Conditions: 150 mM KOAc, 10 mM MgCl2 and 150 mM bicine (pH 8.5), 24 C. Chemical mapping of a 177-nucleotide RNA with DMS and 2A3. 2A3 is a SHAPE reagent: it acylates the 2'-hydroxyl of flexible nucleotides of all four kinds. For DMS, 6,726 sequencing reads were counted. For 2A3, 12,642 sequencing reads were counted.

RNA sequence: GGGAACGACUCGAGUAGAGUCGAAAAAGGCUUCUUUAUAAGCAGCUGCACCUCAUCUUUCGCCAUAAGAGAGGUAGAGCUUGCAUAAGCCAUCUUUAUGCCGUUUUCCUGCUCUUCUAAUGGCAGAGGUAUCAUUAAUCUUCGGAUUAAUGAUACCAAAAGAAACAACAACAACAAC
Reactivity to DMS in 0.01 (KOAc 150mM, MgCl2 10mM, bicine 150mM(pH8.5), 24C), signal-to-noise 6, nucleotides 027 to 126: a130g010g000c010u000u000c150u010u010u010a120u010a100a100g000c030a060g010c010u000g010c100a070c020c000u000c040a110u000c020u000u010u000c190g010c130c080a030u000a050a010g000a050g000a020g000g010u000a040g010a020g010c010u000u020g060c010a040u000a030a030g010c150c080a080u010c120u010u000u000a040u000g010c010c130g010u000u000u000u000c020c000u000g010c080u000c080u000u010c150u000a100a040u000g010g030c020a090g000a090
Reactivity to 2A3 in 0.01 (KOAc 150mM, MgCl2 10mM, bicine 150mM(pH8.5), 24C), signal-to-noise 8, nucleotides 027 to 126: a000g060g000c020u060u010c030u060u300u080a300u080a210a030g010c020a000g010c010u150g040c050a030c010c000u020c050a300u000c030u020u070u120c100g030c060c020a050u050a130a000g000a000g000a000g030g000u030a040g020a000g010c040u110u160g000c020a020u020a060a000g010c030c020a070u030c070u030u090u030a050u050g000c010c020g030u020u000u020u050c010c000u040g150c020u010c030u190u040c060u110a090a030u040g000g000c010a020g030a040
Values cover nucleotides 27 to 126.